[RMDB]
Chemical mapping of a 177-nucleotide RNA with 2A3 and DMS. The DMS profile rests on 1,874 reads. DMS adducts were read by reverse transcription with MarathonRT. 2A3 adducts were read by reverse transcription with SuperScript II with manganese. Source: RMDB library OK1LIB, as collected in RNAgym.

RNA sequence: GGGAACGACUCGAGUAGAGUCGAAAAUGGUGACCUGAAAAUAAGCGGGUCUGAGCCGAUAAUCCUAAGAACGUCAGUCAGCGGCAGCAAUAUGAAGGAUGGGUUCAGCUUGGGACAGAUUAGGAUAUCUAUCCAGCACCUUCGGGUGCUGGAUAGAAAAAGAAACAACAACAACAAC
Reactivity to 2A3 in 0.01 (KOAc 150mM, MgCl2 10mM, bicine 150mM(pH8.5), 24C), signal-to-noise 2, nucleotides 027 to 126: u080g000g000u040g000a060c000c000u000g120a000a070a000a140u300a150a020g190c000g000g000g040u000c010u010g110a000g000c020c000g000a020u070a070a000u030c000c000u030a000a020g030a080a030c000g000u030c070a020g040u010c000a000g000c000g110g050c010a000g000c030a030a090u090a070u220g100a160a060g050g040a060u150g030g020g020u010u050c060a030g070c050u080u150g050g040g020a030c000a050g060a190u090u000a070g010g010a030u000a000
Reactivity to DMS in 0.01 (KOAc 150mM, MgCl2 10mM, bicine 150mM(pH8.5), 24C), signal-to-noise 2, nucleotides 027 to 126: u000g010g020u020g000a060c000c010u030g000a130a070a100a090u070a100a090g010c020g050g010g010u020c020u030g030a070g030c020c020g000a070u030a040a100u040c040c030u000a140a070g000a110a160c160g000u000c070a090g010u010c080a070g000c020g000g030c110a130g030c110a090a030u020a110u040g000a050a010g030g000a020u040g030g000g000u010u000c030a050g030c000u040u000g010g010g020a040c030a050g020a230u040u020a070g000g000a100u000a030